[RMDB]
RNA sequence: GGGAACGACUCGAGUAGAGUCGAAAAGGGAAUGACGCUGCUGUCGGCCAACAUUGACCUCGCCAACGCUGAGUCGGUGUUGCUGAUGCGGACGGGCCGCGAAUAUGGGCUCAAAUGUGCGUUGGCAUGGUACGUACGGAUUCGUCCGUACGUACCAAAAAGAAACAACAACAACAAC
Reactivity to DMS in 0.01 (KOAc 150mM, MgCl2 10mM, bicine 150mM(pH8.5), 24C), signal-to-noise 3, nucleotides 027 to 126: g020g000g010a140a090u010g030a120c070g010c030u000g000c050u010g010u000c070g040g000c090c050a080a080c080a030u000u000g010a050c070c070u000c160g000c030c010a030a020c030g020c030u000g000a040g010u000c030g010g030u000g000u000u000g010c110u010g010a100u010g000c030g000g000a170c140g040g000g020c010c030g000c050g010a090a060u000a070u000g010g010g010c030u030c040a030a050a090u000g030u010g000c000g000u000u000g000g020c020a100
Reactivity to 2A3 in 0.01 (KOAc 150mM, MgCl2 10mM, bicine 150mM(pH8.5), 24C), signal-to-noise 2, nucleotides 027 to 126: g050g040g040a040a060u090g040a020c040g010c030u030g030c020u040g060u070c000g000g040c060c030a000a060c010a070u050u060g030a070c000c030u040c080g000c030c020a030a020c010g000c070u090g060a010g040u030c040g060g010u030g020u050u000g030c070u090g030a090u140g000c020g050g020a010c070g010g070g000c020c010g000c020g010a040a010u140a110u050g100g000g000c030u010c060a080a110a030u300g040u090g000c010g000u000u020g010g010c000a000